[RMDB]
RNA sequence: GGGAACGACUCGAGUAGAGUCGAAAAGAUAUGGAAGUAGACCGCUGAUGACCGCUUUCGGAAACGAAAGCGCAAGGAACUACGGUCCUACUUCCUAAGUCAAAAGGCGCACGUUCGCGUGCGCCAAUCUAUAGACCAUCUUCGGAUGGUCUAUAGAAAAAGAAACAACAACAACAAC
Reactivity to 2A3 in 0.01 (KOAc 150mM, MgCl2 10mM, bicine 150mM(pH8.5), 24C), signal-to-noise 2, nucleotides 027 to 126: g000a000u000a000u040g030g020a000a000g000u010a000g020a000c000c030g060c300u240g160a300u210g050a060c030c010g000c000u010u000u010c010g020g020a000a030a000c010g000a000a000a010g000c010g010c010a040a060g120g060a180a080c140u110a040c290g030g030u010c110c030u000a000c010u010u000c000c000u000a000a020g000u000c020a000a000a030a300g000g000c000g030c020a000c010g010u090u090c300g020c020g140u020g020c010g000c010c000a020a020
Reactivity to DMS in 0.01 (KOAc 150mM, MgCl2 10mM, bicine 150mM(pH8.5), 24C), signal-to-noise 3, nucleotides 027 to 126: g010a010u000a180u000g000g000a000a000g010u000a030g010a030c000c020g010c110u010g010a110u020g020a300c300c010g010c000u000u010u000c000g000g000a050a060a080c010g000a010a000a030g000c000g020c080a030a050g020g000a120a110c110u000a050c010g000g000u010c150c140u000a010c000u000u000c000c000u000a030a060g010u010c020a060a040a160a110g010g010c000g010c010a010c010g030u000u010c160g020c010g030u010g000c010g000c010c010a010a020

Description:
The data come from the RNA Mapping Database (RMDB), library TTRDEL. The record gives the reactivity of an RNA of 177 nucleotides to 2A3 and DMS. Values are in units of 0.01, from 0 to 300, in steps of 10. For 2A3, 3,470 sequencing reads were counted. Values cover nucleotides 27 to 126.